[RMDB]
RNA sequence: GGGAACGACUCGAGUAGAGUCGAAAAUUCAUCACGUCGUUUAUUCGGUUGAUAACGAAACACCGUCCUGCUCAGCGAUAACGUCCUGCAUGCCUGGCGUAUGCUCAUCGUAAACUGCGUGGUCAGAAGUUCUAAUGGAGUUCGCUCCAUUAGAACUAAAAGAAACAACAACAACAAC
Reactivity to DMS in 0.01 (KOAc 150mM, MgCl2 10mM, bicine 150mM(pH8.5), 24C), signal-to-noise 6, nucleotides 027 to 126: u000u000c090a110u010c040a030c040g020u000c170g000u000u000u010a060u030u010c050g010g000u010u010g010a070u020a050a070c080g010a080a090a120c210a070c050c020g020u000c030c020u000g010c030u010c030a090g010c070g020a060u020a070a120c110g000u000c020c020u000g000c060a050u000g000c040c010u000g010g000c060g000u010a040u010g000c060u000c050a050u020c050g000u010a030a050a070c030u000g010c040g020u000g010g010u000c120a080g000a120
Reactivity to 2A3 in 0.01 (KOAc 150mM, MgCl2 10mM, bicine 150mM(pH8.5), 24C), signal-to-noise 9, nucleotides 027 to 126: u060u030c010a020u030c010a010c010g030u060c020g020u020u040u050a140u090u060c040g020g020u020u040g050a070u060a110a030c050g060a100a030a020c070a020c030c020g030u050c010c010u030g020c020u020c050a030g010c020g040a040u060a150a050c040g060u040c010c010u030g010c020a060u090g020c000c020u030g050g000c030g010u040a050u080g020c010u010c040a090u050c030g060u050a030a050a040c010u020g010c010g040u020g010g010u020c010a010g030a140